[RMDB]
RNA sequence: GGGAACGACUCGAGUAGAGUCGAAAAAGUGGCUCUACGGAGCCACAAAAAUUGAUGACUUUUAAUGAGUACGAAGUAGUUUGGGUCAAACCAAGCUGCUGAUGAACUUAUUUCGCAGCCUGAAAAAGAUCAGAUUGGUAUUCGUACCAAUCUGAUCAAAAGAAACAACAACAACAAC
Reactivity to 2A3 in 0.01 (KOAc 150mM, MgCl2 10mM, bicine 150mM(pH8.5), 24C), signal-to-noise 5, nucleotides 027 to 126: a000g000u000g010g000c000u000c000u010a160c300g060g000a000g000c000c000a000c000a000a010a000a000a010u110u120g050a050u090g030a040c020u050u090u050u130a050a020u080g010a000g010u010a090c040g000a030a000g000u010a000g000u000u000u000g030g000g000u080c050a030a020a020c010c000a000a000g010c000u010g010c010u000g040a020u110g020a010a010c010u020u020a010u070u040u030c080g000c050a050g030c010c030u150g050a110a040a010a030a030
Reactivity to DMS in 0.01 (KOAc 150mM, MgCl2 10mM, bicine 150mM(pH8.5), 24C), signal-to-noise 4, nucleotides 027 to 126: a100g020u000g020g000c000u000c000u010a120c180g050g010a000g030c000c000a000c000a010a020a050a090a070u030u010g000a140u010g000a090c030u020u010u010u000a020a050u000g010a010g000u000a070c030g010a120a000g010u000a010g010u000u000u000g010g010g000u010c300a080a110a180c010c000a000a000g000c000u000g020c000u000g000a160u030g020a090a020c010u010u000a030u000u000u010c090g020c110a050g000c010c000u000g010a040a080a060a100a090
Description
The record gives the reactivity of an RNA of 177 nucleotides to 2A3 and DMS. 2A3 adducts were read by reverse transcription with SuperScript II with manganese. Source: RMDB libraries RFM100 and RFMREP, as collected in RNAgym. Values are in units of 0.01, from 0 to 300, in steps of 10.